Notes:
An RNA of 177 nucleotides, treated with 2A3 and DMS and read out base by base. For DMS, 10,088 sequencing reads were counted. The RNA was probed in 150 mM KOAc, 10 mM MgCl2 and 150 mM bicine (pH 8.5) at 24 C. It was measured as part of the RMDB library M2PK50.
RNA sequence: GGGAACGACUCGAGUAGAGUCGAAAAGUUGUAAGGUUCGCCUUACAACAAAAUAAAACAGGCUAGUACCGGCGUGAAAAAGGUACGAAGAUCGAAAGAUCAAAAGACACUUGUUCGCAAGUGUCAACAACUUAUAGUUGUUCGCAACUAUAAGUUGAAAAGAAACAACAACAACAAC
Reactivity to 2A3 in 0.01 (KOAc 150mM, MgCl2 10mM, bicine 150mM(pH8.5), 24C), signal-to-noise 6, nucleotides 027 to 126: g000u010u000g000u010a000a000g030g020u010u110c200g120c010c000u000u000a000c000a000a000c000a000a030a000a010u100a000a050a010a020c060a020g140g080c010u030a030g010u000a000c010c000g000g010c020g050u190g100a100a050a020a030a020g000g000u010a000c010g010a110a030g000a000u020c010g030a060a020a030g010a000u010c010a030a040a030a050g010a000c000a000c000u010u020g020u070u080c150g010c090a000a000g000u000g000u010c000a000a020
Reactivity to DMS in 0.01 (KOAc 150mM, MgCl2 10mM, bicine 150mM(pH8.5), 24C), signal-to-noise 6, nucleotides 027 to 126: g000u000u010g010u000a000a000g010g010u000u020c250g020c000c000u000u000a010c000a010a000c000a020a060a060a060u010a080a080a110a120c170a140g010g000c010u000a090g020u000a000c000c000g000g000c000g030u000g000a040a070a050a060a090g000g000u000a010c010g010a110a120g010a010u000c000g000a130a070a130g010a010u000c000a080a050a090a080g000a010c000a000c000u000u000g000u000u010c170g020c000a000a000g010u000g000u000c000a090a140